[RMDB]
RNA sequence: GGGAACGACUCGAGUAGAGUCGAAAACGGGCCUGCCGCCGUGACUAGCGUGCCCGUCACCAGCACCGCGGCCAGGUUCAGCGCGCUGAGCGCCGUGAGCGCACGCAACGGGCUGACCACCAGUUCGAAAAGUAAAUCACUUCGGUGAUUUACUUUUAAAAGAAACAACAACAACAAC
Reactivity to DMS in 0.01 (KOAc 150mM, MgCl2 10mM, bicine 150mM(pH8.5), 24C), signal-to-noise 7, nucleotides 027 to 126: c110g010g000g000c010c020u000g010c010c020g020c000c180g010u000g000a140c020u000a070g040c130g020u000g000c030c130c180g010u010c020a020c010c030a060g000c010a030c020c220g010c020g010g000c110c080a040g000g010u000u000c010a090g010c060g000c020g010c030u000g010a100g010c010g010c000c040g020u010g010a130g020c020g010c020a070c130g010c060a050a090c040g000g000g010c010u000g000a100c090c070a180c130c040a070g000u010u000c070g000
Reactivity to 2A3 in 0.01 (KOAc 150mM, MgCl2 10mM, bicine 150mM(pH8.5), 24C), signal-to-noise 3, nucleotides 027 to 126: c020g020g020g000c010c000u010g000c000c010g000c000c020g030u040g080a300c040u070a080g040c020g090u010g010c040c110c030g070u070c010a010c000c000a000g000c010a010c000c010g020c000g000g000c070c050a030g020g000u030u020c000a030g040c070g000c000g020c100u080g070a050g070c020g000c020c010g110u150g090a140g010c020g000c010a010c050g020c010a030a040c010g000g040g000c000u020g020a060c000c020a050c020c010a010g040u050u070c030g050